[RMDB]
RNA sequence: GGGAACGACUCGAGUAGAGUCGAAAAGUGCGGCGACUUACGCUCUGGAUAGGUUGUCGAAUAUGCGUUCGGGUGCUUGUGUCGGAGGAGGUGAGAGCCCAUGGCGGUCGUUGAUGACCUAGCGCCCAACGACGCACCUAUUCGUAGGUGCGUCGUUAAAAGAAACAACAACAACAAC
Reactivity to 2A3 in 0.01 (KOAc 150mM, MgCl2 10mM, bicine 150mM(pH8.5), 24C), signal-to-noise 3, nucleotides 027 to 126: g090u100g000c010g000g010c000g010a030c000u000u030a030c120g100c070u080c050u240g150g010a130u060a070g070g000u010u000g010u020c010g050a050a020u260a140u260g140c130g060u050u090c080g000g040g000u010g030c000u000u020g100u060g000u150c000g000g080a060g040g000a030g060g070u140g030a030g010a020g020c000c020c010a090u210g160g000c090g000g010u070c050g120u120u130g120a120u140g000a020c000c000u000a000g000c000g000c010c030c000
Reactivity to DMS in 0.01 (KOAc 150mM, MgCl2 10mM, bicine 150mM(pH8.5), 24C), signal-to-noise 1, nucleotides 027 to 126: g000u040g000c040g000g000c030g000a060c000u000u000a020c090g000c170u000c110u010g010g000a260u010a000g010g010u010u000g000u040c000g010a050a090u030a140u000g030c060g000u010u000c090g030g050g000u000g000c050u090u000g000u030g000u000c010g000g000a130g020g070a030g000g040u000g010a050g000a240g030c000c000c020a210u030g000g020c050g000g020u000c000g000u010u000g040a260u090g000a000c000c030u020a000g000c000g000c010c010c060
The record gives the reactivity of an RNA of 177 nucleotides to 2A3 and DMS. The DMS profile rests on 1,813 reads. DMS adducts were read by reverse transcription with MarathonRT. For 2A3, 1,037 sequencing reads were counted. Conditions: 150 mM KOAc, 10 mM MgCl2 and 150 mM bicine (pH 8.5), 24 C.